[RMDB]
RNA sequence: GGGAACGACUCGAGUAGAGUCGAAAAGAUAUGGACAUAUAUUGACAUGCCUAGUGGUCGGAAACGACCACGGGCAACAGCAAUGAUAUGUCCUAAGUCAAACAGUGACUUGUUCGCAAGUCACUGAGACUCCAUGGUACUUCGGUACCAUGGAGUCAAAAGAAACAACAACAACAAC
Reactivity to 2A3 in 0.01 (KOAc 150mM, MgCl2 10mM, bicine 150mM(pH8.5), 24C), signal-to-noise 1, nucleotides 027 to 126: g010a010u050a010u070g020g000a000c000a000u020a000u010a020u050u030g070a110c110a230u190g000c000c010u000a140g000u040g000g000u010c010g010g000a050a020a030c000g000a010c000c020a000c010g000g000g000c030a020a000c100a020g020c000a000a020u110g150a030u060a010u030g010u000c000c010u000a000a000g000u000c010a050a080a150c010a030g010u000g020a000c030u000u000g060u130u150c210g040c170a000a000g000u000c010a000c000u010g000a020
Reactivity to DMS in 0.01 (KOAc 150mM, MgCl2 10mM, bicine 150mM(pH8.5), 24C), signal-to-noise 1, nucleotides 027 to 126: g020a030u000a100u020g010g000a000c000a010u000a010u000a020u000u000g010a040c040a150u010g010c000c000u000a220g070u000g030g010u000c000g050g010a040a050a060c020g030a000c000c000a010c000g030g030g010c000a010a040c300a170g020c010a000a040u010g030a050u000a000u000g010u000c000c000u000a000a060g000u010c010a260a090a220c020a000g000u010g000a020c000u000u010g010u000u050c210g030c000a000a000g000u000c000a020c030u000g000a080